[RMDB]
RNA sequence: GGGAACGACUCGAGUAGAGUCGAAAAGCUGGGCGAAUACCCGGGACGCAGCAUGAUCACCGUCGAGCGACUCGCGCAAAACGUCAACGACUGCGGGCGGUACGGCCUCGCCGACUGCGCCGGCAGGGUCCUCCUAUUGCUUCGGCAAUAGGAGGACAAAAGAAACAACAACAACAAC
Reactivity to 2A3 in 0.01 (KOAc 150mM, MgCl2 10mM, bicine 150mM(pH8.5), 24C), signal-to-noise 3, nucleotides 027 to 126: g050c050u060g010g040g030c060g080a080a050u070a150c000c000c000g030g010g000a050c040g010c060a020g000c020a080u090g070a070u170c040a030c070c020g030u030c020g030a040g020c020g030a040c010u020c070g040c000g020c020a010a040a000a170c050g050u080c110a080a060c060g090a050c010u010g040c000g000g000g000c010g020g000u120a190c020g020g030c010c140u170c130g020c000c000g020a020c000u030g020c050g090c000c000g060g030c000a000g000g020
Reactivity to DMS in 0.01 (KOAc 150mM, MgCl2 10mM, bicine 150mM(pH8.5), 24C), signal-to-noise 1, nucleotides 027 to 126: g010c020u010g040g000g070c010g040a080a070u020a050c020c060c030g000g010g020a170c030g000c070a010g040c040a140u020g020a070u000c060a040c070c030g000u020c000g000a170g000c000g020a050c020u000c010g000c030g060c040a040a080a050a160c040g000u020c000a040a180c070g020a080c010u000g010c000g000g010g010c010g020g010u000a050c000g000g020c000c200u080c300g000c010c020g000a030c000u000g020c000g000c000c000g000g020c030a070g000g040
Source: RMDB library OK1LIB, as collected in RNAgym. The record gives the reactivity of an RNA of 177 nucleotides to 2A3 and DMS.